[RMDB]
This 177-nucleotide RNA was probed chemically with DMS and 2A3.
RNA sequence: GGGAACGACUCGAGUAGAGUCGAAAAGCCCAUAGCGAGCAAGAGAUGCCGUCCCAUGACAGAACGAAUUUCUCCACCCUUUACAUAUUCCACCGUCCAACCCUGGCUGAGCCUGCUUACCUGAGCCGGUACGCUAGUAGUUCGCUACUAGCGUACCAAAAGAAACAACAACAACAAC
Reactivity to DMS in 0.01 (KOAc 150mM, MgCl2 10mM, bicine 150mM(pH8.5), 24C), signal-to-noise 3, nucleotides 027 to 126: g010c010c000c000a120u070a090g000c050g000a080g000c050a070a110g010a090g000a080u000g010c020c060g000u000c000c010c000a070u000g000a130c100a090g000a070a040c260g000a060a090u000u010u000c010u000c020c060a090c060c000c050u030u020u000a090c180a120u040a100u020u000c000c030a040c040c030g000u000c020c030a050a050c030c040c000u050g000g010c030u020g000a080g000c050c000u000g000c040u000u010a130c060c000u000g000a060g010c040c070
Reactivity to 2A3 in 0.01 (KOAc 150mM, MgCl2 10mM, bicine 150mM(pH8.5), 24C), signal-to-noise 7, nucleotides 027 to 126: g040c000c000c000a020u040a020g100c050g040a050g020c030a100a020g040a010g020a090u070g030c000c010g040u040c000c010c020a040u090g040a060c040a060g040a120a020c040g040a170a120u080u110u020c040u020c020c010a060c000c010c000u050u110u070a060c060a060u110a080u100u040c010c010a030c000c020g020u000c020c030a040a040c030c000c010u010g000g020c020u000g020a020g020c010c010u020g010c010u060u080a070c000c020u060g010a030g060c060c030
The 2A3 profile rests on 6,868 reads. The reactions ran in a buffer of 150 mM KOAc, 10 mM MgCl2 and 150 mM bicine (pH 8.5), at 24 C. 2A3 is a SHAPE reagent: it acylates the 2'-hydroxyl of flexible nucleotides of all four kinds. For 2A3 the reverse transcriptase was SuperScript II with manganese. For DMS the reverse transcriptase was MarathonRT.